This 177-nucleotide RNA was probed chemically with DMS and 2A3. The DMS profile rests on 897 reads. The RNA was probed in 150 mM KOAc, 10 mM MgCl2 and 150 mM bicine (pH 8.5) at 24 C. Reactivities are rounded to 0.1 and cut off at 0 and 3. The data come from the RNA Mapping Database (RMDB), library OK2TRN.
RNA sequence: GGGAACGACUCGAGUAGAGUCGAAAAACCAUCGGCACCUGUUGCAGUAUCCUCGACGUACACGUCUUCACCAUCGGCACCUGCUGCAAUAUCCUCAACGUACACGUCUUCACCAUCGGCACCUGUACUCCAUGCCAGGAUUCGUCCUGGCAUGGAGAAAAGAAACAACAACAACAAC
Reactivity to DMS in 0.01 (KOAc 150mM, MgCl2 10mM, bicine 150mM(pH8.5), 24C), signal-to-noise 1, nucleotides 027 to 126: a110c020c000a100u000c120g000g000c080a040c040c020u000g000u000u000g010c020a080g020u000a170u000c000c000u030c080g020a080c040g020u000a040c170a050c050g000u000c020u000u010c170a130c030c080a050u010c050g010g010c010a090c040c020u000g000c080u010g000c020a030a060u000a040u000c000c000u000c080a040a050c180g000u000a030c120a110c130g060u000c020u000u000c020a030c090c010a120u000c070g000g010c050a110c060c020u040g040u010a060
Reactivity to 2A3 in 0.01 (KOAc 150mM, MgCl2 10mM, bicine 150mM(pH8.5), 24C), signal-to-noise 1, nucleotides 027 to 126: a000c060c010a130u140c030g060g000c060a050c040c030u020g020u110u140g000c020a050g030u060a100u100c020c040u080c040g110a050c040g070u170a030c120a020c080g060u020c040u030u100c050a030c050c000a070u040c000g050g000c000a000c060c010u060g050c000u020g000c000a000a060u040a030u150c020c030u040c020a070a050c030g030u110a000c070a010c070g030u020c070u060u070c000a070c020c000a050u030c000g000g000c000a010c080c020u080g020u050a030